The data come from the RNA Mapping Database (RMDB), library TTRDEL. Structure probing data (DMS and 2A3) for a 177-nucleotide construct.
[RMDB]
RNA sequence: GGGAACGACUCGAGUAGAGUCGAAAAGAUAUGGAAUGCGGGAGCUAAGUGGUCGGAAACGACCACGUAGCUUUGAUCGCCAUUCCUAAGUCAAAUCAUCGUAGUGGGUUCGCCCACUACGAUGAAAGUUUUAGUUCAUCUUCGGAUGAACUAAAACAAAAGAAACAACAACAACAAC
Reactivity to DMS in 0.01 (KOAc 150mM, MgCl2 10mM, bicine 150mM(pH8.5), 24C), signal-to-noise 3, nucleotides 027 to 126: g010a040u000a300u000g010g010a020a000u000g020c000g020g010g000a010g020c000u000a010a030g020u000g000g010u010c010g020g000a060a120a200c000g000a010c010c000a000c000g010u010a020g000c020u000u000u020g010a070u020c020g010c150c050a010u000u000c000c000u000a050a110g020u000c030a090a120a140u010c000a000u000c000g020u000a000g020u000g000g010g010u000u010c270g010c000c000c000a010c000u000a000c000g000a010u000g000a010a080a050
Reactivity to 2A3 in 0.01 (KOAc 150mM, MgCl2 10mM, bicine 150mM(pH8.5), 24C), signal-to-noise 2, nucleotides 027 to 126: g020a020u070a040u120g000g000a040a010u020g020c000g040g000g010a010g010c000u000a080a010g010u000g000g030u000c000g010g020a070a090a080c010g000a000c010c000a000c000g000u000a000g000c000u100u010u050g140a130u110c020g090c130c000a000u000u000c000c000u020a130a010g050u040c030a020a010a190u030c010a010u000c000g010u000a000g010u000g000g070g000u070u050c270g170c030c000c000a000c000u010a010c000g000a000u000g000a010a000a010
The RNA was probed in 150 mM KOAc, 10 mM MgCl2 and 150 mM bicine (pH 8.5) at 24 C.